Description:
An RNA of 177 nucleotides, treated with 2A3 and DMS and read out base by base. For DMS, 1,424 sequencing reads were counted. Values cover nucleotides 27 to 126. The RNA was probed in 150 mM KOAc, 10 mM MgCl2 and 150 mM bicine (pH 8.5) at 24 C. The 2A3 profile rests on 1,482 reads.
RNA sequence: GGGAACGACUCGAGUAGAGUCGAAAAUGAUCGAGGUGGCCAUCGAGCCGAAGACCAAGAGCGACCAAGAGAAGCUGAGUCUGUCGAUCCAGAAGCUCGCCGAAGAGGAUCCGACCUUCAAGGUGCAGGUUGAAGCGUAUUUCGAUACGCUUCAACCAAAAGAAACAACAACAACAAC
Reactivity to 2A3 in 0.01 (KOAc 150mM, MgCl2 10mM, bicine 150mM(pH8.5), 24C), signal-to-noise 2, nucleotides 027 to 126: u130g000a010u030c020g010a000g000g070u190g020g020c000c010a210u130c080g060a060g020c010c020g040a050a010g030a010c000c020a150a030g050a020g200c010g040a020c020c020a200a010g120a010g010a220a000g020c030u050g040a040g070u000c010u060g150u070c040g000a030u020c040c000a010g010a150a010g010c000u050c060g000c010c010g050a090a020g050a010g060g040a050u070c060c070g120a100c030c000u060u040c010a040a030g010g000u010g010c070a040
Reactivity to DMS in 0.01 (KOAc 150mM, MgCl2 10mM, bicine 150mM(pH8.5), 24C), signal-to-noise 3, nucleotides 027 to 126: u000g010a040u000c020g020a130g030g070u000g020g000c010c050a070u000c190g000a170g020c020c000g000a110a080g000a070c040c020a080a160g000a090g010c020g000a170c080c040a120a070g010a120g000a020a270g020c070u000g010a120g000u000c020u000g010u000c040g000a050u000c030c070a080g000a150a130g000c020u010c050g030c020c020g010a110a100g000a110g000g000a150u020c120c080g000a090c020c010u000u000c070a040a300g010g020u000g000c210a130